Conditions: 150 mM KOAc, 10 mM MgCl2 and 150 mM bicine (pH 8.5), 24 C. Chemical mapping of a 177-nucleotide RNA with DMS and 2A3. DMS adducts were read by reverse transcription with MarathonRT. The 2A3 profile rests on 5,446 reads. Values cover nucleotides 27 to 126. Source: RMDB library M2PK50, as collected in RNAgym.
[RMDB]
RNA sequence: GGGAACGACUCGAGUAGAGUCGAAAACCCUCACUCUUCGGAGUGAGGGAAAUCUGAUUCCCUAUAGCUGGGUAUCCGGGCUAAGACGGAUAGGCGUUGCCAAAAGAUCUGGCUUCGGCCAGAUCAACACCACUAAUACGUUCGCGUAUUAGUGGUGAAAAGAAACAACAACAACAAC
Reactivity to DMS in 0.01 (KOAc 150mM, MgCl2 10mM, bicine 150mM(pH8.5), 24C), signal-to-noise 6, nucleotides 027 to 126: c000c000c000u000c000a010c000u000c000u000u010c190g030g010a020g010u000g010a010g000g010g000a000a010a030u010c130u010g000a230u000u000c000c000c010u000a110u010a080g020c010u000g010g010g010u000a010u000c010c010g010g000g010c040u010a070a070g010a140c020g000g000a030u000a020g000g010c050g010u000u000g010c010c050a100a080a100a120g010a020u000c000u000g000g000c000u000u000c170g030g010c000c000a010g000a000u000c000a070a150
Reactivity to 2A3 in 0.01 (KOAc 150mM, MgCl2 10mM, bicine 150mM(pH8.5), 24C), signal-to-noise 3, nucleotides 027 to 126: c010c000c000u000c000a000c000u010c000u020u110c260g150g010a000g010u000g000a010g000g000g000a080a020a000u090c070u100g070a190u020u050c000c000c000u100a190u110a170g010c020u010g130g000g070u060a030u000c000c000g050g000g000c080u110a100a030g130a050c000g030g000a010u030a060g030g020c110g240u170u250g070c030c000a040a080a020a080g000a000u000c000u000g000g000c000u020u040c180g080g000c000c000a000g000a000u000c000a000a000